The data come from the RNA Mapping Database (RMDB), library RNAMAK. An RNA of 207 nucleotides, treated with 2A3 and read out base by base.
[RMDB]
RNA sequence: GGGAACGACUCGAGUAGAGUCGAAAAGGACCGCUUCGGCGGUCCAAAAAGGGGUCCGCGAGAGGUCAAGACAUGGUCUGAAGCCUCCACGGACCAACAGCUUGACUACCCACCUCGAUGGACGGAGGCACCCAAAAAACUGAUGUUCGCAUCAGAACGAUGUACAUCAGUUCGCUGAUGUACAUCGAAAAGAAACAACAACAACAAC
Reactivity to 2A3 in 0.01 (KOAc 150mM, MgCl2 10mM, bicine 150mM(pH8.5), 24C), signal-to-noise 1, nucleotides 027 to 156: g010g000a010c020c020g000c030u070u130c230g140g060c000g000g010u000c000c000a000a000a000a010a000g030g000g010g000u010c030c000g010c030g010a170g010a010g210g020u250c080a060a000g000a050c140a260u300g080g030u030c000u020g070a090a010g000c000c020u000c000c000a000c000g000g000a000c000c000a000a020c000a000g020c010u110u070g050a030c050u120a130c060c020c010a030c020c030u040c030g060a060u140g060g080a060c020g020g010a000g020g020c000a030c020c000c040a020a020a080a000a060a040c020u020g010a020u000g050u080u170c300g000c090a000u030c000a020g040a030a000